The record gives the reactivity of an RNA of 177 nucleotides to 2A3 and DMS. Reactivities are given for positions 27 through 126.

RNA sequence: GGGAACGACUCGAGUAGAGUCGAAAACUGAAACGCGACGAGAUGGGCUGAUAGAGACAUGAAGAGAACACGUGCAUAACUGGAAACAGUAGCUUGUAGGGCAUGCAGACGCAAGUAGAAAGCACGUAUAACUAGUGAGAUUCGUCUCACUAGUUAUAAAAGAAACAACAACAACAAC
Reactivity to 2A3 in 0.01 (KOAc 150mM, MgCl2 10mM, bicine 150mM(pH8.5), 24C), signal-to-noise 9, nucleotides 027 to 126: c030u030g030a030a040a030c070g020c030g020a040c020g000a020g010a080u080g020g030g010c020u030g020a040u050a100g100a000g020a020c030a070u120g060a090a040g060a010g020a110a020c030a000c050g010u010g000c010a030u040a190a040c010u010g020g020a050a030a000c010a010g010u020a010g010c010u020u020g020u060a140g000g070g030c070a050u130g020c030a030g020a040c030g010c020a020a010g000u020a040g060a040a040a000g010c010a000c020g010u020
Reactivity to DMS in 0.01 (KOAc 150mM, MgCl2 10mM, bicine 150mM(pH8.5), 24C), signal-to-noise 9, nucleotides 027 to 126: c040u010g010a070a080a090c110g010c050g000a060c070g010a080g000a060u010g000g010g010c040u010g010a070u010a060g010a100g010a060c080a050u020g010a090a080g010a110g010a090a090c150a060c010g010u000g000c010a040u010a070a020c010u010g000g000a160a080a150c020a010g010u000a300g000c010u000u000g000u000a110g010g000g010c050a080u010g010c090a060g000a060c080g000c020a010a020g000u000a050g000a050a040a120g000c010a010c030g010u000